[RMDB]
RNA sequence: GGGAACGACUCGAGUAGAGUCGAAAACACCACUUCACACCUCAUCGAAGCAAAAGGUUCGCUGAAUUAUGAUUGCGUGGCACGCUCGGUCAAGCUCGUGUGGUAUCACACACAUGGCGCCAGGUCAGUAGUACUUCCACUUCGGUGGAAGUACUACAAAAGAAACAACAACAACAAC
Reactivity to DMS in 0.01 (KOAc 150mM, MgCl2 10mM, bicine 150mM(pH8.5), 24C), signal-to-noise 2, nucleotides 027 to 126: c070a170c040c030a110c060u010u000c050a010c050a090c100c000u000c000a020u000c040g060a030a050g010c050a130a060a020a130g050g010u000u040c030g010c030u030g010a100a090u010u010a080u010g000a030u010u000g010c050g000u000g000g000c110a120c110g010c020u030c090g060g000u000c050a080a080g020c030u010c080g020u000g000u000g000g020u000a130u040c170a060c070a020c000a050c040a100u000g010g000c020g010c030c050a130g000g000u000c070a110
Reactivity to 2A3 in 0.01 (KOAc 150mM, MgCl2 10mM, bicine 150mM(pH8.5), 24C), signal-to-noise 4, nucleotides 027 to 126: c040a020c000c000a020c010u090u070c050a040c010a030c030c010u060c010a120u050c030g070a090a000g050c030a030a090a050a030g070g030u030u040c050g020c070u070g060a120a030u180u040a110u200g100a080u030u120g010c040g010u020g010g010c020a010c070g030c020u060c030g010g030u050c030a060a050g000c010u020c090g000u020g010u010g060g000u150a140u290c040a050c010a000c000a000c000a070u070g020g010c010g030c020c010a020g060g040u030c030a030
The data come from the RNA Mapping Database (RMDB), libraries RFM100 and RFMREP. Structure probing data (DMS and 2A3) for a 177-nucleotide construct. The RNA was probed in 150 mM KOAc, 10 mM MgCl2 and 150 mM bicine (pH 8.5) at 24 C. As a SHAPE reagent, 2A3 marks flexible, mostly unpaired nucleotides at the ribose 2'-OH.